[RMDB]
RNA sequence: GGGAACGACUCGAGUAGAGUCGAAAAGGCUUAUAUUGACGCAUGGAAACAUUUUUCACAUUUACCACAUUUACCAAAAGAAAAAAAUGUAUCUCAUGCAAACGCUGUUUCAUUAGUUCGUGGUAAAUACUCCAAUUAUCUUCGGAUAAUUGGAGUAAAAAGAAACAACAACAACAAC
Reactivity to DMS in 0.01 (KOAc 150mM, MgCl2 10mM, bicine 150mM(pH8.5), 24C), signal-to-noise 5, nucleotides 027 to 126: g010g010c020u020u010a110u020a130u010u010g010a120c190g020c000a000u010g000g000a040a090a030c020a010u000u000u000u000u010c090a130c170a120u000u000u000a020c030c020a030c010a150u010u000u000a110c100c070a060a070a090a100g020a020a000a020a050a030a030a010u010g010u000a080u010c030u010c020a010u000g010c000a070a070a090c280g010c020u000g000u010u000u000c030a080u010u010a090g020u010u000c090g000u000g000g000u000a010a010a070
Reactivity to 2A3 in 0.01 (KOAc 150mM, MgCl2 10mM, bicine 150mM(pH8.5), 24C), signal-to-noise 5, nucleotides 027 to 126: g030g000c040u200u070a060u060a070u270u250g090a040c110g000c010a010u000g020g030a030a110a010c010a010u010u020u010u060u060c060a070c030a180u050u030u030a020c020c000a020c020a070u150u140u190a100c040c030a060a040a080a050g120a090a100a040a000a000a010a000u010g020u030a100u000c070u040c100a010u000g000c000a030a030a010c060g020c030u030g030u040u090u030c050a040u040u100a040g060u050u100c070g000u020g000g020u020a010a010a020
Structure probing data (DMS and 2A3) for a 177-nucleotide construct. It was measured as part of the RMDB library OK2TRN. As a SHAPE reagent, 2A3 marks flexible, mostly unpaired nucleotides at the ribose 2'-OH. For 2A3, 5,948 sequencing reads were counted. 2A3 adducts were read by reverse transcription with SuperScript II with manganese.